Structure probing data (DMS and 2A3) for a 177-nucleotide construct.
The RNA was probed in 150 mM KOAc, 10 mM MgCl2 and 150 mM bicine (pH 8.5) at 24 C.
Source: RMDB library M2PK50, as collected in RNAgym.
Reactivities are rounded to 0.1 and cut off at 0 and 3.
For DMS the reverse transcriptase was MarathonRT.
The 2A3 profile rests on 5,611 reads.

RNA sequence: GGGAACGACUCGAGUAGAGUCGAAAAUGGACGUUGUUCGCAACGUCCACAUACUGAGACCUACGUUAAACGUAUCGCGGGCAAAAGUGCAGUUAGAAUAAGUACCUAUUGAGUUCGCUCAAUAGAAGAGGGUUUAUAAUUUCGAUUAUAAACCCUCAAAAGAAACAACAACAACAAC
Reactivity to DMS in 0.01 (KOAc 150mM, MgCl2 10mM, bicine 150mM(pH8.5), 24C), signal-to-noise 5, nucleotides 027 to 126: u000g000g010a020c000g020u000u000g000u010u010c170g030c010a010a000c010g010u000c000c000a010c120a040u010a090c090u000g010a130g000a120c030c010u000a030c050g010u010u000a080a100a140c150g010u000a030u010c050g020c040g010g000g000c050a050a040a090a120g000u000g010c030a050g000u000u010a080g010a090a090u010a040a080g010u000a150c160c010u000a010u000u000g000a010g020u000u010c250g010c010u010c000a000a010u000a010g010a110a100
Reactivity to 2A3 in 0.01 (KOAc 150mM, MgCl2 10mM, bicine 150mM(pH8.5), 24C), signal-to-noise 5, nucleotides 027 to 126: u050g010g000a000c000g010u000u000g020u060u060c140g010c100a000a000c000g000u000c010c000a000c010a010u060a010c010u060g070a020g050a140c000c010u000a020c040g050u030u140a160a190a020c030g030u060a040u170c040g000c040g050g000g000c030a050a070a050a020g100u070g020c030a040g030u100u140a070g090a210a080u150a200a030g050u040a060c010c000u010a010u000u010g010a010g010u040u090c190g030c060u010c000a010a000u000a010g010a050a020